Structure probing data (DMS and 2A3) for a 177-nucleotide construct.
The 2A3 profile rests on 1,178 reads.
Conditions: 150 mM KOAc, 10 mM MgCl2 and 150 mM bicine (pH 8.5), 24 C.
Values cover nucleotides 27 to 126.
It was measured as part of the RMDB library OK1LIB.
RNA sequence: GGGAACGACUCGAGUAGAGUCGAAAAGAAAGGCGAGGUGCAGUGCGGUGUGUGCCAAAAAGUGCUCAGUUGCAGGGACUCCCUCAUCCGACACUGUAAGGCUUUCCACAAAGGUGAGGUAGUCGAGGCGUACAGUCAGUUUCGACUGACUGUACGCAAAAGAAACAACAACAACAAC
Reactivity to DMS in 0.01 (KOAc 150mM, MgCl2 10mM, bicine 150mM(pH8.5), 24C), signal-to-noise 1, nucleotides 027 to 126: g000a100a120a090g000g000c070g000a050g000g030u020g000c070a140g000u000g000c060g010g010u020g000u000g000u000g040c050c060a000a060a070a130a040g000u000g000c070u010c070a080g040u000u000g020c070a080g020g000g000a000c030u000c030c000c020u000c100a000u030c020c060g000a090c070a070c170u030g000u060a000a160g010g000c060u000u000u030c070c000a110c120a000a160a130g000g000u000g010a030g000g000u000a050g000u010c010g040a080g030
Reactivity to 2A3 in 0.01 (KOAc 150mM, MgCl2 10mM, bicine 150mM(pH8.5), 24C), signal-to-noise 2, nucleotides 027 to 126: g090a020a020a000g070g000c030g010a050g020g010u030g010c070a040g000u000g070c010g000g000u010g000u000g000u090g000c020c000a030a120a000a030a030g160u100g000c000u000c050a090g020u080u070g030c000a030g010g040g100a090c010u130c000c000c010u000c000a030u020c000c030g040a010c000a000c040u060g060u170a030a080g020g010c000u000u090u060c020c010a040c060a030a050a010g030g000u000g000a010g000g000u040a000g010u000c030g000a040g080